[RMDB]
RNA sequence: GGGAACGACUCGAGUAGAGUCGAAAAAUUGCCCCCAGGCUGGUUUGAGGUUCUUAUGGACCUCAGAUCACCUAAGGGGCGAUUGCCUGACGGUAGUGUUGUUACCUACGAGAAGAUUUCUUCUAUGGGUAACGGUUACACAUUCGAGCUCGAGUCGCGUUAGGCUUUGGUUCGCCAAAGCCUAACGAAAAGAAACAACAACAACAAC
Reactivity to 2A3 in 0.01 (KOAc 150mM, MgCl2 10mM, bicine 150mM(pH8.5), 24C), signal-to-noise 1, nucleotides 027 to 156: a000u000u000g000c000c010c000c000c010a000g010g060c190u030g000g000u000u000u000g010a000g000g020u020u000c030u130u300a170u300g000g000a000c000c000u000c000a000g000a010u000c000a010c000c000u030a050a010g000g000g000g020c000g000a010u020u020g030c010c040u140g120a090c140g010g000u120a060g010u070g000u000u130g000u030u000a000c000c000u020a050c300g050a000g000a040a000g120a230u110u180u060c000u020u000c000u010a010u060g040g000g020u010a010a000c010g000g050u140u150a020c000a000c000a060u040u060c020g030a000g030c000u010c000g000a000g000u000c000g030

Conditions: 150 mM KOAc, 10 mM MgCl2 and 150 mM bicine (pH 8.5), 24 C. An RNA of 207 nucleotides, treated with 2A3 and read out base by base.